Conditions: 150 mM KOAc, 10 mM MgCl2 and 150 mM bicine (pH 8.5), 24 C. The record gives the reactivity of an RNA of 177 nucleotides to DMS and 2A3. It was measured as part of the RMDB library OK1LIB. Reactivities are given for positions 27 through 126. Reactivities are rounded to 0.1 and cut off at 0 and 3. The 2A3 profile rests on 1,121 reads.
[RMDB]
RNA sequence: GGGAACGACUCGAGUAGAGUCGAAAAGAUUACGUGUCGUUGUGGAAUCGAUACUACACACGAGAUUCCAAGGUCUCUGUAGUACGUCCGCUGGUGACGUCUUUGGAGUCACGUUCGAUAUACGAAAGGUAUCUACUAGCUUCGGCUAGUAGAUACCAAAAGAAACAACAACAACAAC
Reactivity to DMS in 0.01 (KOAc 150mM, MgCl2 10mM, bicine 150mM(pH8.5), 24C), signal-to-noise 2, nucleotides 027 to 126: g000a080u020u030a090c120g060u010g020u020c000g000u010u000g020u040g000g010a100a030u020c040g000a110u000a030c120u050a010c140a020c280a240c050g000a000g000a000u000u000c020c050a060a030g010g020u000c000u030c020u000g000u020a000g030u030a000c000g000u010c000c010g040c040u030g000g000u050g030a000c100g000u000c070u050u010u000g000g000a110g000u000c030a060c000g000u030u000c050g000a080u000a060u040a130c080g010a100a150a070
Reactivity to 2A3 in 0.01 (KOAc 150mM, MgCl2 10mM, bicine 150mM(pH8.5), 24C), signal-to-noise 2, nucleotides 027 to 126: g050a100u130u080a030c050g000u010g020u010c020g000u020u130g000u000g000g040a050a080u180c090g000a070u010a010c000u010a000c020a000c010a000c060g000a000g000a010u100u040c240c020a070a020g140g000u000c000u000c040u020g040u000a000g050u020a010c000g020u000c000c000g000c060u080g040g060u070g000a020c040g150u030c070u060u040u130g190g000a040g040u010c020a000c050g000u040u040c020g020a020u000a020u090a110c030g050a140a030a030